[RMDB]
RNA sequence: GGGAACGACUCGAGUAGAGUCGAAAAGAUAUGGAGGCAUGAUUCGAGAUACAUGGGUCGGAAACGACCUUGUAUCGAUGAGAAUCACUAGCCUCCUAAGUCAAACACCGUGCUUCGGCACGGUGAAGGUAAAAGAUUGGUUCGCCAAUCUUUUACCAAAAGAAACAACAACAACAAC
Reactivity to 2A3 in 0.01 (KOAc 150mM, MgCl2 10mM, bicine 150mM(pH8.5), 24C), signal-to-noise 3, nucleotides 027 to 126: g010a010u030a020u090g000g010a000g010g000c030a040u060g020a020u020u020c050g040a020g020a200u010a010c030a090u200g120g030g030u010c000g010g010a010a020a020c010g010a010c000c000u000u000g000u010a000u000c000g010a020u100g010a010g010a000a010u010c010a000c070u060a080g000c000c000u000c000c000u000a000a000g000u000c000a010a090a040c010a000c010c000g000u000g000c010u090u110c300g210g000c000a000c000g030g000u000g000a000a020
Reactivity to DMS in 0.01 (KOAc 150mM, MgCl2 10mM, bicine 150mM(pH8.5), 24C), signal-to-noise 5, nucleotides 027 to 126: g000a030u000a180u010g000g010a020g010g030c000a220u000g000a010u000u000c000g000a060g010a020u000a000c000a020u000g030g010g010u000c000g010g010a050a030a080c000g010a010c000c000u000u000g010u000a010u000c000g010a140u020g000a160g000a010a010u000c000a050c300u010a200g000c000c000u000c000c000u000a000a080g000u010c020a170a120a300c010a000c010c000g020u000g010c000u000u010c240g030g010c000a000c000g000g000u000g010a020a040
This 177-nucleotide RNA was probed chemically with 2A3 and DMS. The RNA was probed in 150 mM KOAc, 10 mM MgCl2 and 150 mM bicine (pH 8.5) at 24 C. For 2A3 the reverse transcriptase was SuperScript II with manganese. It was measured as part of the RMDB library TTRDES.